This 177-nucleotide RNA was probed chemically with DMS and 2A3. The RNA was probed in 150 mM KOAc, 10 mM MgCl2 and 150 mM bicine (pH 8.5) at 24 C. For 2A3 the reverse transcriptase was SuperScript II with manganese. For DMS the reverse transcriptase was MarathonRT.
RNA sequence: GGGAACGACUCGAGUAGAGUCGAAAAACGGCGACGGGAUGCUCGUCAAGGGCAACGCGCGGCAUCCGAUCGUCGAGGACGAUGUGGUCAUCUACGCAGGCGCGACGAUUCUCGGCCGCGUGACGAAGUACCGGAUCAUGUUCGCAUGAUCCGGUACAAAAGAAACAACAACAACAAC
Reactivity to DMS in 0.01 (KOAc 150mM, MgCl2 10mM, bicine 150mM(pH8.5), 24C), signal-to-noise 3, nucleotides 027 to 126: a110c070g030g000c040g030a000c050g010g010g010a040u000g010c020u020c030g010u010c130a110a150g000g010g010c080a090a150c140g020c090g000c040g010g000c010a030u000c030c090g010a030u000c000g040u000c000g000a040g010g010a170c060g010a070u000g020u010g000g000u000c130a090u000c060u040a040c020g030c080a100g020g020c090g000c000g000a010c040g000a110u000u020c080u000c110g030g000c010c010g020c010g030u000g000a090c110g010a100a090
Reactivity to 2A3 in 0.01 (KOAc 150mM, MgCl2 10mM, bicine 150mM(pH8.5), 24C), signal-to-noise 2, nucleotides 027 to 126: a000c020g000g020c020g010a020c010g010g060g070a070u060g000c020u020c070g140u080c120a070a130g030g000g030c040a060a060c040g010c000g000c030g040g000c000a040u050c060c020g010a120u020c020g000u020c000g000a020g030g070a020c040g050a070u100g030u030g100g030u160c060a110u060c130u070a010c010g000c040a100g080g000c050g020c000g080a000c010g030a070u110u040c040u010c060g030g000c000c020g000c000g000u020g020a030c050g050a070a040
The 2A3 profile rests on 2,790 reads. The DMS profile rests on 2,431 reads.